[RMDB]
RNA sequence: GGGAACGACUCGAGUAGAGUCGAAAACCGGAUCUUUGACACGUAAAGUGAAGUUACUAUUUAGGGCUUCAUUUUAUUUCAAAGAAUUUGCUACCCGCACUUUCACUGCUACCACUGCUGUAGGUAGGUAGGCUAAUAAGUUCGCUUAUUAGCCUACAAAAGAAACAACAACAACAAC
Reactivity to 2A3 in 0.01 (KOAc 150mM, MgCl2 10mM, bicine 150mM(pH8.5), 24C), signal-to-noise 5, nucleotides 027 to 126: c010c000g010g090a080u010c000u000u020u010g030a040c050a020c220g010u000a000a010a010g000u000g020a000a000g010u030u060a300c040u100a190u220u220u300a040g010g000g000c000u000u010c000a000u020u000u000u010a010u000u080u010c000a010a010a010g040a040a060u080u060u120g010c000u030a070c010c010c020g080c020a030c040u070u150u140c050a050c110u080g000c010u060a030c010c020a030c080u120g050c060u100g100u110a050g050g020u000a000g020
Reactivity to DMS in 0.01 (KOAc 150mM, MgCl2 10mM, bicine 150mM(pH8.5), 24C), signal-to-noise 4, nucleotides 027 to 126: c150c030g000g000a120u000c010u000u000u010g000a030c300a050c210g010u000a000a010a020g020u000g000a020a010g000u010u000a090c010u010a260u010u010u020a020g010g000g010c000u000u000c000a000u000u000u000u000a000u010u000u000c010a010a000a030g010a070a070u010u000u010g010c020u000a060c030c010c050g030c080a050c100u000u000u000c080a070c130u000g010c020u000a040c060c030a090c060u010g020c160u000g010u000a050g000g010u000a010g010